[RMDB]
Record summary
Conditions: 150 mM KOAc, 10 mM MgCl2 and 150 mM bicine (pH 8.5), 24 C. The record gives the reactivity of an RNA of 207 nucleotides to DMS and 2A3. 2A3 adducts were read by reverse transcription with SuperScript II with manganese. For 2A3, 1,301 sequencing reads were counted. For DMS, 1,673 sequencing reads were counted.
RNA sequence: GGGAACGACUCGAGUAGAGUCGAAAAACUGAUACCUUACGAGGUAUCAGAAUGACUUCGUGGUAGAGCGCCACGAACGGAAAAUAAAGAAAGCUCGAUUGAAACGCACCGUAUACGCACGGUGCGAAAAAGUCGAUCCAGUUCGCUGGAUCGACAAUCAUAGUCCCAUGUUCGCAUGGGACUAUGAAAAAGAAACAACAACAACAAC
Reactivity to DMS in 0.01 (KOAc 150mM, MgCl2 10mM, bicine 150mM(pH8.5), 24C), signal-to-noise 1, nucleotides 027 to 156: a150c000u000g000a020u010a020c010c000u010u000a120c280g020a120g070g020u010a000u000c000a000g000a070a080u000g020a140c040u000u000c000g040u010g020g050u000a050g000a040g020c000g000c000c000a010c010g000a000a010c040g020g000a080a020a170a050u000a050a140a110g030a020a070a110g000c000u010c000g060a150u020u000g000a190a050a230c010g030c000a000c000c000g080u020a190u030a170c290g000c100a000c000g000g000u000g000c000g000a000a030a010a150a090g000u010c000g030a030u000c000c000a000g030u000u000c300g040c020u020g020g000a010u000c030g050a000c010a000a040
Reactivity to 2A3 in 0.01 (KOAc 150mM, MgCl2 10mM, bicine 150mM(pH8.5), 24C), signal-to-noise 2, nucleotides 027 to 156: a000c000u000g000a000u010a010c010c010u040u040a080c280g120a010g010g000u000a000u000c000a010g010a020a010u080g070a020c060u000u000c010g010u000g000g050u020a180g040a000g010c000g000c000c000a000c000g000a030a000c010g080g020a060a040a050a030u030a010a020a030g160a060a020a010g010c020u010c000g120a200u120u300g040a140a130a000c000g000c000a000c000c000g050u040a050u050a170c080g040c020a000c010g000g000u000g010c000g000a000a000a000a000a000g000u010c000g000a020u000c000c000a000g030u030u040c180g090c110u000g000g000a000u000c000g000a000c000a000a000